[RMDB]
Structure probing data (2A3 and DMS) for a 177-nucleotide construct.
The reactions ran in a buffer of 150 mM KOAc, 10 mM MgCl2 and 150 mM bicine (pH 8.5), at 24 C.
The 2A3 profile rests on 26,700 reads.
It was measured as part of the RMDB library OK1LIB.
RNA sequence: GGGAACGACUCGAGUAGAGUCGAAAACGUCGUGAACUAGCGACAAUGCCGUAGAUCGAUCGUUAUCUAACCGAAACAUCGUGACUAGUCGUAGAAUAGAACCAGGAGCGGGCGCUGCCAAACAAAGACGAUGUCUCAGAUUCGUCUGAGGCAUCGUAAAAGAAACAACAACAACAAC
Reactivity to 2A3 in 0.01 (KOAc 150mM, MgCl2 10mM, bicine 150mM(pH8.5), 24C), signal-to-noise 9, nucleotides 027 to 126: c050g010u000c000g010u020g050a110a060c050u020a050g010c000g010a010c000a020a060u120g020c000c010g030u050a020g010a080u030c020g010a010u000c060g020u020u020a110u080c040u040a030a080c040c020g010a020a010a000c010a020u030c010g020u020g050a030c020u030a010g020u010c020g040u030a020g040a110a040u080a050g050a040a020c000c020a030g020g030a030g020c010g000g030g000c040g000c030u050g030c010c020a060a100a070c050a040a150a010g120
Reactivity to DMS in 0.01 (KOAc 150mM, MgCl2 10mM, bicine 150mM(pH8.5), 24C), signal-to-noise 9, nucleotides 027 to 126: c130g000u000c010g010u010g010a130a080c090u010a090g000c030g000a030c030a120a100u030g000c010c010g000u020a070g000a100u010c030g010a040u000c120g010u010u010a070u010c040u010a090a090c210c080g000a060a040a060c060a030u010c020g010u010g000a110c070u000a070g000u010c030g000u010a060g000a080a080u020a090g010a070a100c040c040a050g010g010a060g020c010g000g000g000c050g000c040u000g000c000c060a050a080a090c150a040a060a060g000